[RMDB]
RNA sequence: GGGAACGACUCGAGUAGAGUCGAAAAUCACCGUGUUCGCACGGUGAAAAAAGAUAUGGAAAUCCCAAGCUCGAUAAGAUGACACUCGGAAACGAGUGUACAUCUUUUGACGAGCGACGGAUUUCCUAAGUCAAAAAGAUGCGAUUCGUCGCAUCAAGUGACUGAAAAGUUUCGACUUUUCAGUCACAAAAGAAACAACAACAACAAC
Reactivity to 2A3 in 0.01 (KOAc 150mM, MgCl2 10mM, bicine 150mM(pH8.5), 24C), signal-to-noise 2, nucleotides 027 to 156: u030c000a000c000c000g000u010g020u020u050c270g010c090a020c000g000g000u000g000a010a010a000a000a000a000g020a010u050a020u100g000g010a000a000a000u000c000c000c010a020a030g000c010u000c010g040a040u010a110a000g000a010u000g000a010c000a000c000u000c000g020g030a050a090a030c000g000a000g000u000g010u010a030c000a000u000c000u000u010u020u030g100a040c030g000a000g000c000g000a000c000g020g000a000u000u000u000c000c000u000a010a030g020u010c020a000a000a050a070a080g020a010u030g000c000g000a010u040u070c200g020u030c010g100c010a000u000c000a000a010
Reactivity to DMS in 0.01 (KOAc 150mM, MgCl2 10mM, bicine 150mM(pH8.5), 24C), signal-to-noise 2, nucleotides 027 to 156: u000c010a030c000c000g050u000g000u000u000c300g050c000a010c000g000g000u000g000a000a000a060a070a040a100g030a090u000a300u000g010g000a080a010a060u000c000c000c020a020a300g000c030u000c000g020a260u000a040a030g010a020u000g010a110c010a000c010u000c000g000g030a280a090a170c050g010a040g010u000g000u000a040c000a010u000c010u010u000u030u020g030a210c080g010a010g010c000g000a210c300g020g000a040u000u010u000c000c000u000a010a030g020u020c020a080a040a060a140a170g040a020u000g010c000g010a020u000u000c280g030u000c000g010c010a010u000c000a010a100

Structure probing data (2A3 and DMS) for a 207-nucleotide construct. For 2A3 the reverse transcriptase was SuperScript II with manganese. The reactions ran in a buffer of 150 mM KOAc, 10 mM MgCl2 and 150 mM bicine (pH 8.5), at 24 C.